[RMDB]
RNA sequence: GGGAACGACUCGAGUAGAGUCGAAAAGUCCCUAGAGACAGCCUGGAAAGAUUGGGUGCCAGCUGCAGAGAGGAGAGCAAGGCGACCAAACGCAGGGUAAGGUCUGGAGGUGCUCAUAGUUCACUACGGGACAUGUACAUGGAAGUGAAUAAUUAUAUCAUAAAUGGGAUUUCGAUCCCAUUUAUGAAAAAGAAACAACAACAACAAC
Reactivity to 2A3 in 0.01 (KOAc 150mM, MgCl2 10mM, bicine 150mM(pH8.5), 24C), signal-to-noise 2, nucleotides 027 to 156: g040u040c010c000c000u040a070g070a000g030a100c030a030g040c050c010u070g040g060a090a070a020g070a100u060u150g020g000g010u040g020c000c000a040g020c030u080g040c070a020g030a000g010a000g080g000a020g010a000g060c030a040a050g040g000c020g020a020c020c000a090a070a000c080g000c090a020g000g040g000u080a050a070g010g030u030c020u040g050g010a020g010g020u060g000c010u030c060a090u070a050g020u040u070c020a020c110u120a010c040g010g010g040a020c020a060u090g020u040a050c020a000u100g060g020a050a040g030u040g030a020a010u050a070a010u180u180a180u070a050
Reactivity to DMS in 0.01 (KOAc 150mM, MgCl2 10mM, bicine 150mM(pH8.5), 24C), signal-to-noise 3, nucleotides 027 to 156: g030u000c010c000c020u010a110g000a180g000a110c030a150g020c050c050u010g030g010a130a080a160g000a190u000u000g010g010g050u000g020c020c030a130g020c020u000g010c050a120g000a140g000a080g020g000a080g000a150g060c020a100a120g010g030c030g020a100c030c030a030a070a060c030g010c010a090g010g020g040u000a060a100g010g020u010c040u000g020g000a110g020g010u000g000c020u000c030a100u000a110g020u000u000c060a050c010u000a110c040g020g010g000a070c050a090u010g020u000a060c060a000u000g010g010a120a060g010u000g000a050a070u000a070a090u010u000a110u010a180
This 207-nucleotide RNA was probed chemically with 2A3 and DMS. DMS adducts were read by reverse transcription with MarathonRT. Values cover nucleotides 27 to 156. The data come from the RNA Mapping Database (RMDB), library OK3TST. The reactions ran in a buffer of 150 mM KOAc, 10 mM MgCl2 and 150 mM bicine (pH 8.5), at 24 C.